[RMDB]
RNA sequence: GGGAACGACUCGAGUAGAGUCGAAAAUGGACUUAAUCAUGCAUUUUCUAGUCUAUUGAGUGGAAAGUUCAAAAAGUCAGACGGUAGUUAUCGAACACAUCCUCACUAUUCAUGGAUGCAGAAUAUUUCUAUUCCUAGAAGUGUUGGAUUUUAUCCGCCCUCUUAAAGGAUUCGUCCUUUAAGAGGGAAAAGAAACAACAACAACAAC
Reactivity to 2A3 in 0.01 (KOAc 150mM, MgCl2 10mM, bicine 150mM(pH8.5), 24C), signal-to-noise 5, nucleotides 027 to 156: u070g010g010a010c030u060u080a040a040u140c020a060u060g030c000a040u090u100u080u070c050u040a030g040u010c030u050a140u070u100g020a010g020u070g020g050a100a060a030g000u040u050c080a060a050a020a080a040g100u090c060a040g040a060c030g030g020u060a040g020u090u110a080u180c080g040a040a010c040a000c010a070u020c010c000u020c010a050c030u070a090u150u090c050a060u130g030g000a010u020g020c030a010g040a070a020u090a190u090u060u020c010u010a020u010u020c000c000u020a060g010a150a030g060u000g010u050u080g040g030a050u000u060u040u090a070u010c020c030g010
Reactivity to DMS in 0.01 (KOAc 150mM, MgCl2 10mM, bicine 150mM(pH8.5), 24C), signal-to-noise 2, nucleotides 027 to 156: u000g030g010a080c010u000u010a080a080u000c100a110u000g030c020a020u000u000u000u000c020u000a100g000u000c030u010a090u010u010g010a060g010u010g040g010a050a020a050g030u000u000c020a050a110a090a120a090g010u000c070a130g010a090c000g030g060u010a080g020u000u000a050u010c060g000a120a160c090a050c050a090u000c020c010u000c090a130c060u000a140u000u010c050a120u010g010g030a030u000g020c050a100g020a090a050u000a080u000u000u010c010u000a050u000u010c020c020u010a180g000a100a100g040u000g010u000u000g040g010a110u000u000u000u000a080u000c070c080g000